[RMDB]
RNA sequence: GGGAACGACUCGAGUAGAGUCGAAAAGAGGAUGUUAUAACCCAUUCGAGCAUGCACAUGUCUCACCCUCACCAUCAGUGGACCUUGGGGAAGCUCUUGCAUGAUGGGCUUCUAUAGUCUGACUCAGGAAGCUGUUUAAAAAUACAGUUGCCAGUCAUGCUAAUUUAGGAUUCGUCCUAAAUUAGCAAAAAGAAACAACAACAACAAC
Reactivity to DMS in 0.01 (KOAc 150mM, MgCl2 10mM, bicine 150mM(pH8.5), 24C), signal-to-noise 3, nucleotides 027 to 156: g000a120g030g020a060u000g020u000u040a120u010a100a100c030c020c010a200u010u000c060g000a100g010c000a070u000g010c030a060c070a120u010g020u040c010u000c010a070c020c030c010u000c040a130c070c040a110u020c060a120g020u010g010g000a080c050c030u010u000g020g020g050g000a050a070g010c010u000c020u010u010g040c060a070u010g000a120u000g030g010g010c050u000u000c050u000a080u010a100g030u000c040u010g010a030c030u010c050a150g080g010a010a040g020c000u000g010u000u000u010a030a080a100a110a180u000a030c010a010g020u000u000g000c000c010a090g020u000c030a130
Reactivity to 2A3 in 0.01 (KOAc 150mM, MgCl2 10mM, bicine 150mM(pH8.5), 24C), signal-to-noise 5, nucleotides 027 to 156: g050a000g040g000a020u070g040u160u160a160u110a250a100c020c010c020a030u120u150c090g040a040g000c020a040u080g030c050a070c010a120u090g070u050c010u010c020a100c000c010c000u020c020a050c010c010a040u120c040a020g040u070g040g030a040c020c030u070u090g060g000g020g000a000a000g000c010u000c020u050u130g040c040a050u060g020a040u060g040g000g030c000u050u000c010u020a070u070a030g050u000c060u050g000a010c010u020c100a060g020g010a020a020g010c010u020g060u020u140u130a100a160a020a010a010u140a040c000a010g010u020u010g060c000c000a020g010u040c020a020
An RNA of 207 nucleotides, treated with DMS and 2A3 and read out base by base. Conditions: 150 mM KOAc, 10 mM MgCl2 and 150 mM bicine (pH 8.5), 24 C. For 2A3, 2,900 sequencing reads were counted. For 2A3 the reverse transcriptase was SuperScript II with manganese. The data come from the RNA Mapping Database (RMDB), library OK3TST.